[RMDB]
RNA sequence: GGGAACGACUCGAGUAGAGUCGAAAAUCGAGAGUGAGUCUCCUCUCGUAAAUACAAGACUCAAAACAAUAGUAACUGCGAACAACAUCGUAAGCUUCAAGCGCGUAGCAGUAGCUGCGUAGAACUCUCUCAUAGAGUCGCUUACCUCUGACCUGACCGCUUGAGGAGAGUUCGCUCUCCUCAAGCGAAAAGAAACAACAACAACAAC
Reactivity to 2A3 in 0.01 (KOAc 150mM, MgCl2 10mM, bicine 150mM(pH8.5), 24C), signal-to-noise 2, nucleotides 027 to 156: u140c000g000a000g010a000g000u010g000a000g000u010c000u060c030c010u010c010u010c020g160u140a000a000a030u020a000c010a000a020g000a000c000u000c000a090a060a050a020c120a060a110u160a060g100u070a080a040c010u040g010c020g030a050a020c090a050a020c000a250u030c030g010u030a000a160g020c010u110u110c060a060a050g050c000g010c000g100u030a000g000c070a040g130u110a070g030c000u000g000c030g030u030a040g070a140a020c000u010c010u000c000u000c010a060u110a300g010a000g030u010c010g000c030u040u120a170c030c000u040c040u080g020a080c040c000u020g040a070c020
This 207-nucleotide RNA was probed chemically with 2A3. For 2A3 the reverse transcriptase was SuperScript II with manganese. Conditions: 150 mM KOAc, 10 mM MgCl2 and 150 mM bicine (pH 8.5), 24 C.